[RMDB]
RNA sequence: GGGAACGACUCGAGUAGAGUCGAAAACGUUAGUAAUGGCGAAUGAACGCGGCACAGUCCAAACCGAAGCCUUCGGGCAAUGUGGUGUUCGGACUGACUUUCAUCGUUUGACCGUUCGUGUGAAGUCUCGUGGUAAGGCAUUCGUGCCUUACCACGAAAAAGAAACAACAACAACAAC
Reactivity to DMS in 0.01 (KOAc 150mM, MgCl2 10mM, bicine 150mM(pH8.5), 24C), signal-to-noise 3, nucleotides 027 to 126: c060g010u000u010a110g000u020a070a050u010g010g000c020g010a060a010u000g020a020a000c280g010c240g030g000c130a170c010a020g000u000c000c000a070a130a000c010c020g000a120a180g000c020c000u010u040c170g040g020g010c030a040a030u000g010u020g040g000u000g000u030u000c250g010g000a020c000u000g010a210c080u010u000u020c120a100u000c060g000u000u000u000g000a140c060c040g010u010u000c060g010u000g000u000g000a120a060g000u000c110
Reactivity to 2A3 in 0.01 (KOAc 150mM, MgCl2 10mM, bicine 150mM(pH8.5), 24C), signal-to-noise 2, nucleotides 027 to 126: c020g000u090u070a060g030u130a240a020u100g080g030c020g010a020a020u170g040a050a020c010g010c050g010g030c030a020c040a170g010u010c010c000a010a010a090c010c010g080a020a000g000c000c000u000u010c140g040g000g020c000a030a080u180g110u240g040g000u060g060u070u090c130g000g000a000c000u000g000a000c000u010u040u020c000a060u000c020g020u000u000u070g160a130c020c000g020u040u010c030g000u030g010u060g160a080a040g040u020c040

An RNA of 177 nucleotides, treated with DMS and 2A3 and read out base by base. Reactivities are given for positions 27 through 126. The reactions ran in a buffer of 150 mM KOAc, 10 mM MgCl2 and 150 mM bicine (pH 8.5), at 24 C.